Structure probing data (2A3 and DMS) for a 177-nucleotide construct. For DMS, 10,638 sequencing reads were counted. The data come from the RNA Mapping Database (RMDB), library RFMREP.

RNA sequence: GGGAACGACUCGAGUAGAGUCGAAAAAAAAGUAAGAGUGUAACAGGAAGAAAGUUGCAGCAUAUACGCGGUGAAUUAUUCGGUGUCAUAGGAGUAGAGUCUUUUGGUAAGAUGCUGAUAAUGAGUACCUAGUAUGAUAGUUCGCUAUCAUACUAGGAAAAGAAACAACAACAACAAC
Reactivity to 2A3 in 0.01 (KOAc 150mM, MgCl2 10mM, bicine 150mM(pH8.5), 24C), signal-to-noise 3, nucleotides 027 to 126: a000a000a030a000g050u060a070a000g030a040g090u040g020u060a070a020c020a050g040g090a070a050g040a060a140a000g030u040u030g020c010a020g010c040a040u110a000u020a130c060g000c010g050g040u050g050a070a050u100u040a050u080u120c020g020g010u020g030u050c030a020u050a080g000g030a020g040u090a030g040a020g100u040c030u000u070u060u070g030g010u030a050a040g020a050u040g000c030u030g020a040u020a120a070u090g030a010g020u010a040
Reactivity to DMS in 0.01 (KOAc 150mM, MgCl2 10mM, bicine 150mM(pH8.5), 24C), signal-to-noise 6, nucleotides 027 to 126: a040a050a050a060g010u010a050a060g000a070g020u010g010u000a070a050c080a070g010g010a070a060g010a060a070a080g010u000u000g010c050a050g010c050a060u010a080u000a060c110g000c080g010g010u000g010a060a050u010u000a070u000u010c050g020g000u000g010u000c050a050u000a060g000g000a060g010u000a050g000a080g000u000c030u000u000u000u010g020g010u010a050a080g010a030u000g020c040u010g000a050u010a050a050u010g000a080g010u000a120